[RMDB]
RNA sequence: GGGAACGACUCGAGUAGAGUCGAAAACCUACCCUAGGUGAAAGCUCCUUCUCUCGCAAUGUGUAACUCAUGAUUCUCAUGACCCCUGGUUGGAGAGAUCCGGACUAGGAGCCAGGGGGCCUCUGAUAAAGCCAGACGCACUUCGGUGCGUCUGGAAGUAUGCAGAAUUCUUCGGAAUUCUGCAUACAAAAGAAACAACAACAACAAC
Reactivity to 2A3 in 0.01 (KOAc 150mM, MgCl2 10mM, bicine 150mM(pH8.5), 24C), signal-to-noise 1, nucleotides 027 to 156: c000c000u050a000c010c000c010u060a040g110g000u110g140a160a040a080g140c050u050c000c040u030u030c030u000c010u000c050g100c140a140a170u080g040u060g000u170a060a010c030u030c080a010u030g120a150u180u020c040u020c100a000u060g060a050c000c030c030c000u100g070g020u040u120g100g000a030g000a000g010a020u040c120c080g060g100a080c000u040a010g010g050a000g020c000c000a000g070g000g000g000g000c010c030u070c040u040g120a120u090a150a120a030g020c000c000a000g020a000c000g010c010a000c000u030u050c190g120g020u000g000c000g000u000c000u010g000g000a000a000